[RMDB]
An RNA of 177 nucleotides, treated with 2A3 and DMS and read out base by base. For 2A3 the reverse transcriptase was SuperScript II with manganese. The RNA was probed in 150 mM KOAc, 10 mM MgCl2 and 150 mM bicine (pH 8.5) at 24 C.

RNA sequence: GGGAACGACUCGAGUAGAGUCGAAAAAUCGACCCUAUCGCCGAUGUGCUCUUCAUUGCUGCUACCGGUGUCGGCGCAGCGGUCGGACACGUGGAUGCAGGGGAAGCCAGCGCCGAUUUCUCCGACAACUGUGAAGAAUUUUCGAAUUCUUCACAGUAAAAGAAACAACAACAACAAC
Reactivity to 2A3 in 0.01 (KOAc 150mM, MgCl2 10mM, bicine 150mM(pH8.5), 24C), signal-to-noise 5, nucleotides 027 to 126: a000u070c020g040a020c000c000c010u040a100u140c030g000c010c010g070a070u050g060u060g050c040u000c020u120u060c060a170u100u270g080c020u020g000c010u060a090c010c040g120g030u120g120u130c010g000g000c010g000c030a010g050c030g050g010u030c020g010g010a030c030a000c050g070u080g030g040a060u080g000c040a040g000g000g000g030a010a010g030c000c020a030g020c040g010c030c010g020a030u030u050u000c050u020c020c000g040a040c020a120
Reactivity to DMS in 0.01 (KOAc 150mM, MgCl2 10mM, bicine 150mM(pH8.5), 24C), signal-to-noise 9, nucleotides 027 to 126: a060u000c080g010a090c010c000c020u000a080u000c050g020c060c010g010a050u000g010u000g010c050u010c050u010u000c150a100u010u000g020c060u010g010c020u000a190c050c080g010g010u000g010u000c020g000g010c300g010c100a050g020c120g010g010u000c020g000g010a060c050a030c070g020u000g010g010a130u000g020c060a090g010g000g010g000a080a090g010c050c040a060g010c060g020c040c020g000a080u000u000u000c050u000c020c040g010a140c220a090